[RMDB]
RNA sequence: GGGAACGACUCGAGUAGAGUCGAAAAGCGCAAAGUUCCUGCAUCACGGCAUUAAGCGCCAGCAACGUUAUGUGGCAGAAGCCAUUACUGAAGAGUGGCGUAUGGCACCCGGUCCGCUUGAAGUGGCCUCCCUAAGGAGGUUCGCCUCCUUAGGGAGAAAAGAAACAACAACAACAAC
Reactivity to DMS in 0.01 (KOAc 150mM, MgCl2 10mM, bicine 150mM(pH8.5), 24C), signal-to-noise 6, nucleotides 027 to 126: g000c030g020c100a090a070a130g020u010u010c010c000u000g010c060a060u020c030a060c090g000g010c030a060u020u020a110a140g010c050g000c020c020a080g000c070a080a140c100g010u020u010a080u040g020u010g000g020c010a090g010a090a180g000c010c000a040u000u010a030c060u010g000a110a120g010a070g010u010g020g010c020g000u010a100u030g000g010c030a080c040c070c030g010g020u030c010c020g000c040u010u000g000a100a070g020u010g010g020c120
Reactivity to 2A3 in 0.01 (KOAc 150mM, MgCl2 10mM, bicine 150mM(pH8.5), 24C), signal-to-noise 8, nucleotides 027 to 126: g050c040g000c040a070a090a020g030u030u020c000c000u010g030c010a020u050c040a020c060g050g000c020a040u090u130a150a040g030c010g000c030c000a030g030c020a020a090c030g040u120u100a090u230g030u040g050g000c030a030g090a180a020g010c000c020a030u040u090a080c080u140g130a140a070g060a080g130u030g010g000c010g000u030a080u050g050g000c010a040c020c010c010g020g030u040c010c010g020c060u040u080g030a080a020g050u070g070g000c000